[RMDB]
RNA sequence: GGGAACGACUCGAGUAGAGUCGAAAAUGCCAUCCUGGUCUGUCUCCACAGCUCCUAGAAGGAAAGGUCGGGGCUGAGACUGACUUUCGGCUGGCACAGGGCCUGGACGAAUGAGGCCAGUGAGGCAUUUCAGAUGCAGAGUUUACCGGAAUGCCAAGCUGGAUAGUACUUUCGAGUACUAUCCAGCAAAAGAAACAACAACAACAAC
Reactivity to DMS in 0.01 (KOAc 150mM, MgCl2 10mM, bicine 150mM(pH8.5), 24C), signal-to-noise 1, nucleotides 027 to 156: u000g000c030c000a010u000c020c010u000g000g010u010c010u010g030u000c010u000c030c300a160c090a100g020c000u000c000c010u030a160g010a170a070g010g040a130a170a150g020g010u000c150g010g010g040g030c030u000g000a080g000a030c030u010g000a040c000u000u000u010c140g030g040c020u020g000g000c010a110c120a040g080g010g000c050c000u000g010g010a110c010g010a100a100u000g000a160g010g000c000c000a030g000u010g000a180g020g000c010a010u000u010u000c040a170g010a150u000g010c050a140g020a200g000u000u000u000a100c010c020g000g020a080a030u000g020c030c030a060a270
Reactivity to 2A3 in 0.01 (KOAc 150mM, MgCl2 10mM, bicine 150mM(pH8.5), 24C), signal-to-noise 5, nucleotides 027 to 156: u040g000c000c000a040u010c000c000u000g000g000u000c010u010g000u030c010u050c080c070a130c030a140g010c000u030c020c020u120a190g070a210a100g150g120a140a130a020g140g070u150c050g010g010g000g000c010u010g000a000g000a010c030u020g000a010c000u040u100u120c060g000g000c000u010g010g020c010a020c040a020g040g020g020c000c020u060g040g080a060c080g100a130a130u150g010a070g050g000c000c010a010g040u090g070a060g000g010c010a010u000u020u020c010a000g030a140u140g080c060a050g070a030g150u080u120u070a090c040c010g010g000a010a000u030g020c020c010a010a010